Source: RMDB library M2PK90, as collected in RNAgym. Chemical mapping of a 177-nucleotide RNA with 2A3 and DMS. The RNA was probed in 150 mM KOAc, 10 mM MgCl2 and 150 mM bicine (pH 8.5) at 24 C. For DMS, 3,179 sequencing reads were counted. In probing experiments dimethyl sulfate is read out at A N1 and C N3, which are open when not base-paired. For 2A3 the reverse transcriptase was SuperScript II with manganese.
RNA sequence: GGGAACGACUCGAGUAGAGUCGAAAAGGGUUUGGAUUACAUCAAUAGUCACAUGAGCAGAAGUAAACAGAACAAGAAGUACUGCGGUUAUUCAAGUUCAAAGUUCACACUAUCGCAAUUAAUUGAAACUGUAGCACUUAUUCGUAAGUGCUACAGUAAAAGAAACAACAACAACAAC
Reactivity to 2A3 in 0.01 (KOAc 150mM, MgCl2 10mM, bicine 150mM(pH8.5), 24C), signal-to-noise 3, nucleotides 027 to 126: g040g020g020u060u070u050g050g010a050u040u110a040c020a060u050c030a040a130u040a090g070u050c030a010c040a150u040g040a020g050c020a020g010a140a000g040u070a030a050a070c020a020g020a020a030c030a020a060g030a050a000g040u040a020c010u020g040c040g050g010u050u030a050u040u020c040a080a030g000u000u000c000a110a010a030g010u050u100c010a000c000a000c010u060a060u130c040g000c090a040a150u130u120a060a120u080u110g070a160a060
Reactivity to DMS in 0.01 (KOAc 150mM, MgCl2 10mM, bicine 150mM(pH8.5), 24C), signal-to-noise 4, nucleotides 027 to 126: g000g000g010u010u000u010g010g000a080u020u010a080c080a040u000c070a090a040u010a040g000u010c070a050c080a060u010g010a080g020c030a040g010a100a070g010u000a040a060a060c050a070g010a060a040c050a030a250g000a030a030g000u010a030c050u010g010c080g030g020u000u000a080u010u000c050a020a290g010u000u000c020a050a100a130g000u000u010c040a070c090a070c060u010a050u010c060g000c040a050a040u020u000a040a090u010u010g010a070a060